Structure probing data (DMS and 2A3) for a 177-nucleotide construct. 2A3 adducts were read by reverse transcription with SuperScript II with manganese. Conditions: 150 mM KOAc, 10 mM MgCl2 and 150 mM bicine (pH 8.5), 24 C. The DMS profile rests on 36,195 reads. Reactivities are given for positions 27 through 126.
[RMDB]
RNA sequence: GGGAACGACUCGAGUAGAGUCGAAAAUACGAACGCUGGCGGCGUGCUUAACACAUACAAGUCGAACGAUGAAGCCCUUCGGGGUGGAUUAGUGGCGAACGGGAGAGUAACACGUGGGCAAUCUGCCAAAUAUUAUUUAAUUCGUUAAAUAAUAUUUAAAAGAAACAACAACAACAAC
Reactivity to DMS in 0.01 (KOAc 150mM, MgCl2 10mM, bicine 150mM(pH8.5), 24C), signal-to-noise 9, nucleotides 027 to 126: u040a070c100g010a070a060c150g010c040u010g010g010c030g010g010c050g010u010g010c040u010u020a080a130c090a090c100a100u030a110c140a080a150g010u010c020g000a110a040c050g000a020u000g010a300a230g000c010c000c000u000u060c150g000g000g000g010u000g000g000a060u010u010a030g010u030g000g010c010g010a070a100c120g000g000g000a100g010a080g010u010a050a060c090a070c060g010u010g000g000g000c030a080a110u020c060u010g000c160c040
Reactivity to 2A3 in 0.01 (KOAc 150mM, MgCl2 10mM, bicine 150mM(pH8.5), 24C), signal-to-noise 8, nucleotides 027 to 126: u190a010c030g030a080a000c040g020c060u040g050g000c020g020g000c020g020u020g010c010u080u100a150a010c040a000c010a060u230a110c050a110a030g030u030c010g030a060a030c010g010a020u030g010a010a010g000c000c000c000u010u070c200g030g000g000g000u030g000g000a000u010u060a060g060u080g060g010c010g020a050a010c020g010g020g010a090g010a010g040u030a080a020c030a010c080g020u060g000g010g010c020a010a090u030c040u110g020c010c000